[RMDB]
RNA sequence: GGGAACGACUCGAGUAGAGUCGAAAAGCAAACACCACUGUGUAGCACAGCACCACCCUGAGCCGCGACCAGUAGUCGUAGUGGUCGUUGUACACUGCGCGCAGGACGCUGAUGAUGAGCCGUACGUGCGUGUCUUUGCCCCCGAUGUCGGCUGUCCGCGGUAAUAUCCAUUCGUGGAUAUUACCGCAAAAGAAACAACAACAACAAC
Reactivity to 2A3 in 0.01 (KOAc 150mM, MgCl2 10mM, bicine 150mM(pH8.5), 24C), signal-to-noise 3, nucleotides 027 to 156: g010c010a000a020a000c000a000c000c030a000c050u110g050u060g070u180a010g050c020a000c020a040g000c030a040c050c000a050c040c000c010u000g000a020g020c010c000g030c020g020a010c000c040a080g060u140a040g130u250c120g140u160a060g090u010g000g000u000c050g020u030u120g020u050a060c100a030c120u110g020c030g000c000g010c090a010g000g010a020c010g020c010u010g040a170u050g010a000u030g110a090g000c010c060g030u120a030c040g040u040g040c120g070u030g030u020c080u040u050u060g030c010c010c000c020c020g030a040u120g070u080c040g060g000c050u040g030u120c060c020
Reactivity to DMS in 0.01 (KOAc 150mM, MgCl2 10mM, bicine 150mM(pH8.5), 24C), signal-to-noise 1, nucleotides 027 to 156: g000c090a090a030a020c020a000c000c020a050c010u000g050u020g060u000a080g060c020a230c010a050g030c030a050c040c000a050c030c000c000u000g000a070g000c000c080g040c000g030a120c020c000a180g000u000a160g020u000c100g050u010a070g010u000g020g000u000c020g040u000u000g000u000a180c110a150c130u010g000c010g030c000g020c040a050g010g000a080c170g050c050u030g040a030u000g010a100u000g000a080g020c000c040g010u020a030c110g050u000g000c110g020u020g030u010c050u000u000u000g020c030c020c010c060c040g020a160u010g020u000c020g010g030c050u010g000u000c010c050